[RMDB]
RNA sequence: GGGAACGACUCGAGUAGAGUCGAAAAUGGACUAGUGCUAAUUAUCUGCGUAGCGUUGCCUUGAGAAACUACUUGGAUUAUGGAGGAUGUCUUGUUUGAAGGAGACACGUGGAGGCUCUCCCGAGCCGGAAGUACUGCCAUUCGUGGCAGUACUUCCAAAAGAAACAACAACAACAAC
Reactivity to 2A3 in 0.01 (KOAc 150mM, MgCl2 10mM, bicine 150mM(pH8.5), 24C), signal-to-noise 7, nucleotides 027 to 126: u110g040g000a040c060u040a050g060u040g100c040u070a080a080u160u090a120u080c030u050g030c030g060u040a030g030c030g050u040u070g030c020c020u070u090g050a040g050a080a040a000c030u060a010c000u030u050g030g020a040u080u030a070u210g060g030a030g020g050a040u040g030u040c000u060u130g100u150u110u140g110a140a060g070g020a020g010a000c030a010c040g030u060g000g060a050g010g030c020u000c000u010c010c010c000g010a000g020c000c020
Reactivity to DMS in 0.01 (KOAc 150mM, MgCl2 10mM, bicine 150mM(pH8.5), 24C), signal-to-noise 4, nucleotides 027 to 126: u030g010g000a070c040u010a100g020u010g020c020u010a040a110u030u010a030u000c030u010g010c100g020u020a040g020c080g020u020u020g000c040c040u010u010g020a120g010a080a070a090c060u020a040c030u010u000g000g000a060u010u010a070u020g010g020a070g000g010a100u000g000u000c040u000u010g030u000u010u030g010a160a100g010g000a060g000a020c040a030c070g020u010g000g020a140g010g000c040u000c020u000c060c020c030g030a060g000c070c100
Structure probing data (2A3 and DMS) for a 177-nucleotide construct. It was measured as part of the RMDB library OK1LIB. For DMS, 9,912 sequencing reads were counted. 2A3 adducts were read by reverse transcription with SuperScript II with manganese.